RNA sequence: GGGAACGACUCGAGUAGAGUCGAAAAACCACUGUCGCAAAAUUCCAGGUGCUGGAAGAAGCGAGCGCCAAGCGUAAGCUGACGCAGAGCGAAAAGCAGAUGUUAGCCAAUAAGCAAAGUAUCAUCGCUAUGGCGGAACAGAAAGCGAUCGUGGGCGCAUGGUACUCUCAUUCGUGAGAGUACCAUGAAAAGAAACAACAACAACAAC
Reactivity to 2A3 in 0.01 (KOAc 150mM, MgCl2 10mM, bicine 150mM(pH8.5), 24C), signal-to-noise 4, nucleotides 027 to 156: a000c010c000a020c030u070g020u010c000g020c010a030a020a100a190u020u010c020c010a050g280g130u180g250c110u040g010g020a040a010g020a040a020g020c030g020a060g030c000g000c000c000a090a030g000c010g030u070a080a060g020c050u030g020a020c020g000c040a030g060a030g100c020g060a030a110a120a020g040c040a030g020a100u030g020u050u030a010g020c020c020a090a090u160a180a040g020c040a110a040a030g080u120a120u230c080a060u120c080g000c030u050a140u060g020g000c000g040g020a020a010c010a000g100a080a070a010g000c010g010a000u040c020g020u030g030g030g020c010g010
Reactivity to DMS in 0.01 (KOAc 150mM, MgCl2 10mM, bicine 150mM(pH8.5), 24C), signal-to-noise 2, nucleotides 027 to 156: a080c000c010a020c030u010g020u000c010g010c010a020a120a120a260u010u000c020c000a060g000g050u000g050c020u010g000g000a100a100g010a140a300g020c000g000a270g000c020g050c000c000a050a110g020c000g000u000a140a070g010c000u010g020a030c000g010c000a060g010a300g020c010g020a070a040a100a130g000c060a110g020a140u000g020u000u000a130g000c010c020a060a110u020a050a040g020c030a070a090a170g020u000a040u020c100a110u000c040g050c030u000a140u000g000g020c010g040g010a070a090c030a110g000a090a110a150g010c000g000a000u000c210g000u000g020g040g030c050g000